[RMDB]
RNA sequence: GGGAACGACUCGAGUAGAGUCGAAAAAUUUCGAUUGGAGCACGUUAUUGAACUUUAUAGGUUGAAAUAUUUGUUGGUGCUCGGACUAUGCAUUUUCAGUCAUCCUGUAAUAAAUAGCGGGUAGAAACGAUCAGUAGUGCUUCGGCACUACUGAUCGAAAAGAAACAACAACAACAAC
Reactivity to 2A3 in 0.01 (KOAc 150mM, MgCl2 10mM, bicine 150mM(pH8.5), 24C), signal-to-noise 2, nucleotides 027 to 126: a000u060u040u030c110g020a060u040u060g110g000a030g000c040a010c080g010u040u000a040u000u040g070a080a020c090u040u090u100a110u110a040g020g000u010u020g010a000a060a150u150a170u110u100u070g110u050u120g040g030u070g030c090u050c090g000g030a060c130u080a080u150g000c000a060u000u000u000u050c060a060g040u040c020a060u010c020c000u000g000u020a040a040u000a060a050a110u030a030g020c000g030g060g000u040a060g200a000a110a000
Reactivity to DMS in 0.01 (KOAc 150mM, MgCl2 10mM, bicine 150mM(pH8.5), 24C), signal-to-noise 1, nucleotides 027 to 126: a040u000u000u000c000g000a170u020u000g000g020a060g000c000a070c010g030u000u000a020u000u010g000a120a120c150u030u000u010a040u040a090g000g000u020u000g000a070a080a020u000a070u090u030u060g010u020u000g010g030u000g000c060u020c110g010g000a110c100u000a050u050g040c070a030u000u000u020u010c280a120g000u050c000a030u010c010c020u000g010u000a110a060u000a060a010a010u020a050g030c030g000g010g100u000a060g010a030a090a200
The record gives the reactivity of an RNA of 177 nucleotides to 2A3 and DMS. The RNA was probed in 150 mM KOAc, 10 mM MgCl2 and 150 mM bicine (pH 8.5) at 24 C. For 2A3, 611 sequencing reads were counted. It was measured as part of the RMDB library OK1LIB. The DMS profile rests on 1,596 reads.